[RMDB]
RNA sequence: GGGAACGACUCGAGUAGAGUCGAAAAAGCGCCGGUUCUUGCAUCAGUAAGACCACACUCUGCUGCGAGCGAAGACGCUGUCACUGCAUGUGACGUACCCCAGUUAUAGGGUGAUCGAUGCAACGACCAGCAUGGUACUCUUCGGAGUACCAUGCUGAAAAGAAACAACAACAACAAC
Reactivity to 2A3 in 0.01 (KOAc 150mM, MgCl2 10mM, bicine 150mM(pH8.5), 24C), signal-to-noise 2, nucleotides 027 to 126: a000g130c120g050c040c070g020g060u150u070c000u020u010g000c000a040u040c030a090g030u110a130a020g020a070c030c000a050c020a000c080u020c020u010g010c000u000g000c030g030a020g020c010g040a080a040g070a030c030g020c060u020g020u000c000a020c090u160g110c120a090u180g020u010g080a020c040g030u120a090c000c010c000c020a020g030u180u160a210u210a130g000g040g000u030g010a040u040c040g000a020u020g000c020a030a030c060g010a020c000
Reactivity to DMS in 0.01 (KOAc 150mM, MgCl2 10mM, bicine 150mM(pH8.5), 24C), signal-to-noise 3, nucleotides 027 to 126: a050g000c120g010c060c020g040g000u010u000c080u000u020g010c020a060u010c040a110g040u000a130a150g000a080c100c090a130c080a090c030u000c030u010g000c030u000g000c050g000a030g020c100g010a150a090g020a080c080g000c030u020g000u000c020a100c050u010g000c150a050u000g020u000g000a030c020g000u010a080c030c020c020c050a080g020u000u010a080u000a070g010g000g030u000g000a060u000c040g000a020u000g000c060a040a090c130g010a020c050

This 177-nucleotide RNA was probed chemically with 2A3 and DMS.
The reactions ran in a buffer of 150 mM KOAc, 10 mM MgCl2 and 150 mM bicine (pH 8.5), at 24 C.